Conditions: 150 mM KOAc, 10 mM MgCl2 and 150 mM bicine (pH 8.5), 24 C. Chemical mapping of a 207-nucleotide RNA with DMS and 2A3.
[RMDB]
RNA sequence: GGGAACGACUCGAGUAGAGUCGAAAACAUUGACCAUAUUAAAAGGGUGGUUAAGUAUACAUCAGCAAUGUUCACUGGCAAUGGAAGACCAAUUAGCUGUUCACUAAACCAAACAGAAGGCACAAUUAAUGUUUUAGAUCAUGGGCAAAUGGUAGACCGGAACUAGGAGAUUCGUCUCCUAGUUCCGAAAAGAAACAACAACAACAAC
Reactivity to DMS in 0.01 (KOAc 150mM, MgCl2 10mM, bicine 150mM(pH8.5), 24C), signal-to-noise 1, nucleotides 027 to 156: c010a100u000u010g000a170c010c000a050u000a040u010u000a100a140a130a120g040g000g010u020g010g020u010u010a010a080g000u000a130u000a050c020a070u000c020a140g030c070a140a050u010g000u000u000c020a140c050u000g010g010c020a080a110u000g020g010a290a040g000a020c020c050a110a110u000u000a050g000c000u000g000u000u000c090a020c100u000a050a080a090c020c040a100a030a100c050a140g010a070a060g010g050c020a020c060a070a010u020u010a050a040u020g030u000u000u000u000a090g020a080u010c040a110u000g000g010g030c010a010a010a050u000g010g020u000a070g020a080c110
Reactivity to 2A3 in 0.01 (KOAc 150mM, MgCl2 10mM, bicine 150mM(pH8.5), 24C), signal-to-noise 4, nucleotides 027 to 156: c020a030u030u070g020a050c000c000a010u060a050u130u260a200a140a030a010g170g020g000u060g030g030u050u040a080a000g040u050a060u050a150c070a080u040c020a010g060c060a050a050u090g040u090u040c040a030c090u020g020g010c050a010a160u130g020g030a070a020g020a060c020c060a060a060u070u070a070g030c040u010g030u140u020c010a010c050u060a100a090a140c040c000a100a030a020c030a040g050a090a030g060g000c050a010c040a050a040u120u080a140a070u150g060u040u100u030u030a050g000a070u080c030a070u070g030g010g000c040a000a030a070u060g040g000u020a030g020a100c030
Record summary
It was measured as part of the RMDB library OK3TST. For DMS, 1,890 sequencing reads were counted.